[RMDB]
RNA sequence: GGGAACGACUCGAGUAGAGUCGAAAAAAAAAAAGGUUGCCGAAUCCGAAAGGUACGGAGGAACCGCUUUUUGGGGUUAAUCUGCAGUGAAGCUGCAGUAGGGAUACCUUCUGUCCCGCACCCGACAGCUAACUCCGGAGGCAAUAACGGAAGGAGACGAUGACGUAUUAUUCGUAAUACGUCAUCGAAAAGAAACAACAACAACAAC
Reactivity to DMS in 0.01 (KOAc 150mM, MgCl2 10mM, bicine 150mM(pH8.5), 24C), signal-to-noise 1, nucleotides 027 to 156: a000a000a010a020a030a060a000g070g050u000u010g030c000c030g000a170a140u020c030c010g000a090a030a100g000g070u000a040c010g040g000a080g000g000a080a110c080c040g020c110u000u000u000u010u000g020g020g020g010u000u000a040a180u000c010u010g000c010a070g020u000g030a150a140g020c010u020g020c000a030g000u000a080g000g020g020a060u000a030c030c130u000u000c040u020g000u000c160c010c070g000c090a060c050c020c010g010a090c040a080g000c010u000a100a170c000u000c010c010g030g020a200g000g040c020a010a060u000a120a120c000g050g030a020a050g010g000a300g010a260
Reactivity to 2A3 in 0.01 (KOAc 150mM, MgCl2 10mM, bicine 150mM(pH8.5), 24C), signal-to-noise 1, nucleotides 027 to 156: a000a000a100a000a000a010a010g040g020u020u020g030c000c000g020a030a080u040c010c010g030a050a020a100g000g020u020a000c000g020g000a010g010g000a060a080c110c030g010c020u150u070u060u100u190g080g010g000g000u050u030a070a020u040c000u010g000c020a020g020u050g250a140a050g110c000u000g010c010a000g010u000a020g000g000g000a010u090a130c020c000u090u060c030u050g060u000c010c000c000g000c010a010c010c000c000g020a120c110a000g000c010u020a040a060c020u000c000c000g000g010a000g020g000c020a010a010u040a030a000c030g020g010a010a000g020g060a050g020a000
The record gives the reactivity of an RNA of 207 nucleotides to DMS and 2A3.
For DMS the reverse transcriptase was MarathonRT.
For 2A3 the reverse transcriptase was SuperScript II with manganese.
Values are in units of 0.01, from 0 to 300, in steps of 10.
For DMS, 2,006 sequencing reads were counted.